Record summary:
Structure probing data (2A3 and DMS) for a 177-nucleotide construct. Reactivities are given for positions 27 through 126. 2A3 adducts were read by reverse transcription with SuperScript II with manganese. For 2A3, 4,278 sequencing reads were counted. The reactions ran in a buffer of 150 mM KOAc, 10 mM MgCl2 and 150 mM bicine (pH 8.5), at 24 C. The DMS profile rests on 2,553 reads.
RNA sequence: GGGAACGACUCGAGUAGAGUCGAAAAGAUAUGGAGUUGCGUAGACAUGCGAUUUCGGAAACGAAAUCGCAACAGCUACGCCAACUCCUAAGUCAAAUCUCCGAACCGCUUCGGCGGUUCGGAGAAACGUACACUGUACGUUCGCGUACAGUGUACGAAAAGAAACAACAACAACAAC
Reactivity to 2A3 in 0.01 (KOAc 150mM, MgCl2 10mM, bicine 150mM(pH8.5), 24C), signal-to-noise 1, nucleotides 027 to 126: g020a000u050a010u100g000g000a000g010u000u010g010c040g000u010a010g080a300c070a140u040g020c000g000a000u010u000u000c000g000g010a000a030a020c000g000a010a000a010u020c020g060c010a000a000c010a000g010c000u010a000c000g000c000c000a010a010c000u000c000c010u000a030a000g010u010c010a030a050a280u010c000u000c000c010g000a010a000c000c000g000c090u110u160c300g210g060c000g010g000u000u010c010g010g000a000g000a010a010a000
Reactivity to DMS in 0.01 (KOAc 150mM, MgCl2 10mM, bicine 150mM(pH8.5), 24C), signal-to-noise 2, nucleotides 027 to 126: g000a020u000a180u000g000g020a000g010u000u000g000c010g010u010a020g010a110c120a190u000g000c000g000a000u000u010u000c000g010g010a040a020a090c000g000a010a000a000u000c000g010c000a000a010c210a100g020c000u000a010c000g000c140c110a010a010c000u000c000c000u000a000a020g010u000c010a100a120a150u000c000u000c000c000g010a000a010c000c010g000c000u000u000c190g020g000c010g020g000u010u000c020g000g000a010g000a010a010a060